[RMDB]
RNA sequence: GGGAACGACUCGAGUAGAGUCGAAAAGCUUUAUAUUGUAUCAUAUCAGGAAGCCUAUGAUAUUCCACUGUAAUGGUGCUCAGUUUGAUCUGUGGGCUCAGGCUCCCAUUGAAUUUGUACCUAAUGGUUUCAUCCAUUGAUGAUUAUUGCUUGAAUCAUUUAGUAGACACUUCGGUGUCUACUAAAUAAAAGAAACAACAACAACAAC
Reactivity to 2A3 in 0.01 (KOAc 150mM, MgCl2 10mM, bicine 150mM(pH8.5), 24C), signal-to-noise 3, nucleotides 027 to 156: g000c010u050u180u040a170u080a020u080u150g010u010a050u140c010a000u050a010u110c040a020g090g040a090a000g000c010c060u060a080u150g070a080u050a100u180u060c060c000a030c080u080g060u180a060a100u100g020g020u030g010c020u030c050a100g060u030u150u200g080a100u060c040u020g010u060g030g010g000c040u000c040a030g050g000c000u030c010c000c010a010u000u080g010a070a080u070u060u210g020u050a030c010c000u050a030a020u030g010g040u030u280u280c050a050u150c010c020a010u040u070g040a060u040g010a030u020u200a030u110u150g060c050u030u040g110a020a060u160c020
Reactivity to DMS in 0.01 (KOAc 150mM, MgCl2 10mM, bicine 150mM(pH8.5), 24C), signal-to-noise 1, nucleotides 027 to 156: g020c060u000u010u000a130u000a100u050u010g000u000a050u000c010a080u010a070u000c030a080g050g010a070a080g040c030c030u000a100u000g010a150u000a140u000u000c010c020a080c050u000g010u010a100a130u010g020g010u010g050c030u010c050a090g010u000u000u020g000a060u000c030u000g010u000g010g020g020c090u000c070a090g020g000c010u000c020c010c050a090u000u000g010a060a140u000u010u000g010u000a040c040c050u030a010a060u000g000g030u010u000u010c100a060u000c000c020a060u010u020g010a100u000g010a100u000u000a040u000u000g000c040u000u000g010a120a220u010c050

The record gives the reactivity of an RNA of 207 nucleotides to 2A3 and DMS. For DMS the reverse transcriptase was MarathonRT. Reactivities are given for positions 27 through 156. Conditions: 150 mM KOAc, 10 mM MgCl2 and 150 mM bicine (pH 8.5), 24 C. The data come from the RNA Mapping Database (RMDB), library OK3TST. For DMS, 2,230 sequencing reads were counted.